Structure probing data (2A3) for a 177-nucleotide construct.
The reactions ran in a buffer of 150 mM KOAc, 10 mM MgCl2 and 150 mM bicine (pH 8.5), at 24 C.
Source: RMDB library OK1LIB, as collected in RNAgym.
Reactivities are rounded to 0.1 and cut off at 0 and 3.
For 2A3 the reverse transcriptase was SuperScript II with manganese.

[RMDB]
RNA sequence: GGGAACGACUCGAGUAGAGUCGAAAAUCACAUCCGACUUCAUCCGCUACCUCGGCGACUGCGGCCUGCCGCACGUUGUCGACUUUGUGCGGUUGGCCUCGUACAACUCGGGUACAAAGAGCACCGGGAGCCAUCGACUAUUCGUAGUCGAUGGCUCAAAAGAAACAACAACAACAAC
Reactivity to 2A3 in 0.01 (KOAc 150mM, MgCl2 10mM, bicine 150mM(pH8.5), 24C), signal-to-noise 2, nucleotides 027 to 126: u080c020a010c000a100u090c010c050g010a010c020u070u030c040a080u100c040c050g020c020u020a050c000c000u000c090g080g000c070g010a000c050u010g050c020g050g000c020c000u060g030c000c000g020c000a000c050g020u020u120g150u170c070g070a130c000u190u040u110g020u010g000c000g000g000u000u000g010g000c010c000u020c000g000u000a000c000a050a050c010u000c010g020g040g080u120a010c010a010a120a050g030a040g000c000a040c020c040g010g040